[RMDB]
RNA sequence: GGGAACGACUCGAGUAGAGUCGAAAAAGCAUGUUAGGUUCGCAUGGUGCACUAUUGUGUUAUUAGUAACUAAGUAAGCUUACAAUCGAAAAUGUUUAACCAUGAAAGGGUAAAAUGGUGUAAGACAGAUACCCUCUGAGCUUCGGCUCAGAGGGAACAAAUAGUGUCCCUUCGGGGACACUAUUUGAAAAGAAACAACAACAACAAC
Reactivity to DMS in 0.01 (KOAc 150mM, MgCl2 10mM, bicine 150mM(pH8.5), 24C), signal-to-noise 2, nucleotides 027 to 156: a060g040c030a080u010g020u000u000a060g010g020u000u010c070g050c050a070u000g010g020u010g000c110a040c020u010a070u010u010g040u000g030u010u000a070u000u000a080g010u000a050a060c040u010a050a120g000u010a070a150g000c050u000u000a040c030a010a080u000c100g000a080a070a120a080u000g000u010u010u010a100a040c010c020a070u000g000a060a090a120g000g000g000u010a020a040a100a040u010g010g010u000g010u000a040a070g010a110c050a120g010a180u000a070c010c000c010u000c000u010g020a020g000c000u010u010c300g060g000c000u000c000a010g020a010g000g000g000a000a010
Reactivity to 2A3 in 0.01 (KOAc 150mM, MgCl2 10mM, bicine 150mM(pH8.5), 24C), signal-to-noise 4, nucleotides 027 to 156: a000g080c050a030u060g020u090u070a040g030g030u040u050c040g020c020a020u080g010g080u070g030c020a030c040u100a170u180u180g040u000g010u020u020a040u030u040a060g040u020a040a020c050u010a140a000g070u010a110a000g060c030u020u060a060c030a050a090u070c020g060a030a000a080a050u020g030u000u070u030a030a010c020c000a000u040g030a120a050a040g090g020g020u130a080a040a000a010u020g000g010u010g030u030a030a010g020a020c020a020g080a060u130a150c000c000c000u000c000u000g000a000g000c010u010u150c300g080g000c000u000c000a000g000a000g000g000g000a000a000